Conditions: 150 mM KOAc, 10 mM MgCl2 and 150 mM bicine (pH 8.5), 24 C. This 207-nucleotide RNA was probed chemically with 2A3 and DMS.
RNA sequence: GGGAACGACUCGAGUAGAGUCGAAAACUGCAGAGGAACUAUUUGUGGUGGGCAAAUUGUGCUUCAGAGACUAUUAAAGAUGCUUCAUGAGAGUUGGGGGCAUGGGAUGGGAGGUCCCCUAGCUUACUGUCAGGUGUCUUACUCCUCAAGGCUCAGGGAUAUAUGCCAAGUUCGCUUGGCAUAUAUCAAAAGAAACAACAACAACAAC
Reactivity to 2A3 in 0.01 (KOAc 150mM, MgCl2 10mM, bicine 150mM(pH8.5), 24C), signal-to-noise 8, nucleotides 027 to 156: c040u050g000c040a020g040a030g040g050a070a060c040u060a120u120u100u090g050u060g000g050u060g010g020g000c030a030a070a080u100u090g040u050g030c020u050u050c030a020g030a010g010a100c050u060a100u240u170a150a050a010g030a030u030g010c000u050u070c050a070u120g060a010g000a010g110u040u030g000g000g000g000g010c030a020u050g040g020g050a050u080g040g020g020a030g000g030u040c000c000c000c000u010a020g000c010u020u090a050c020u050g080u100c040a010g000g020u010g000u000c010u020u050a080c020u020c020c000u040c040a020a030g030g000c010u030c070a020g110g050
Reactivity to DMS in 0.01 (KOAc 150mM, MgCl2 10mM, bicine 150mM(pH8.5), 24C), signal-to-noise 2, nucleotides 027 to 156: c030u020g040c060a140g000a140g040g020a100a130c080u000a080u000u000u020g020u010g030g020u030g010g010g060c060a050a080a150u010u010g010u010g020c060u010u000c050a140g000a110g020a110c040u040a120u000u000a040a060a090g000a080u000g000c030u010u000c030a100u020g030a290g000a050g050u000u010g010g020g010g050g060c050a070u020g020g030g000a130u000g000g020g000a100g030g010u000c010c010c000c030u000a020g050c040u000u010a100c050u000g010u020c050a090g020g050u000g000u000c040u000u000a110c020u000c020c010u010c070a080a080g000g020c010u000c030a080g020g010